The record gives the reactivity of an RNA of 177 nucleotides to 2A3 and DMS. For DMS the reverse transcriptase was MarathonRT. Values cover nucleotides 27 to 126. For 2A3, 6,455 sequencing reads were counted. The RNA was probed in 150 mM KOAc, 10 mM MgCl2 and 150 mM bicine (pH 8.5) at 24 C.

[RMDB]
RNA sequence: GGGAACGACUCGAGUAGAGUCGAAAACUAGGGCGCGCGACGUGUUCAAGAAGGCUGUGGAGAACGCGUGGGCUGGCGGCGACCCAGGCUUCAUCUACAUAGACAACCAUAACAAGUGGCAUCCGACGAUGACAAGUUUUUUCGAAAACUUGUCAUCAAAAGAAACAACAACAACAAC
Reactivity to 2A3 in 0.01 (KOAc 150mM, MgCl2 10mM, bicine 150mM(pH8.5), 24C), signal-to-noise 3, nucleotides 027 to 126: c010u110a110g010g020g010c020g000c010g010c020g060a020c020g050u040g040u050u050c050a040a000g100a050a040g140g000c060u040g040u080g060g030a070g000a050a000c020g000c020g050u050g000g030g030c010u030g050g030c030g020g000c020g030a100c000c000c000a010g030g000c000u030u030c010a070u020c010u030a030c010a060u060a030g030a030c020a040a010c050c000a020u090a160a030c050a110a070g010u020g050g000c010a030u020c020c010g020a030c070
Reactivity to DMS in 0.01 (KOAc 150mM, MgCl2 10mM, bicine 150mM(pH8.5), 24C), signal-to-noise 4, nucleotides 027 to 126: c060u000a110g010g000g010c050g030c050g020c070g010a060c040g020u010g010u010u010c060a070a160g010a110a110g010g010c070u000g010u010g010g000a220g000a070a030c090g020c030g000u000g000g000g000c020u000g020g030c050g020g010c040g010a140c030c030c030a090g010g010c040u000u000c040a090u000c010u000a040c070a070u010a100g000a070c080a050a090c040c040a060u000a040a070c100a070a060g010u010g000g020c090a110u000c010c030g010a220c210
For 2A3 the reverse transcriptase was SuperScript II with manganese. High 2A3 reactivity points to a flexible backbone, as in loops and unpaired stretches.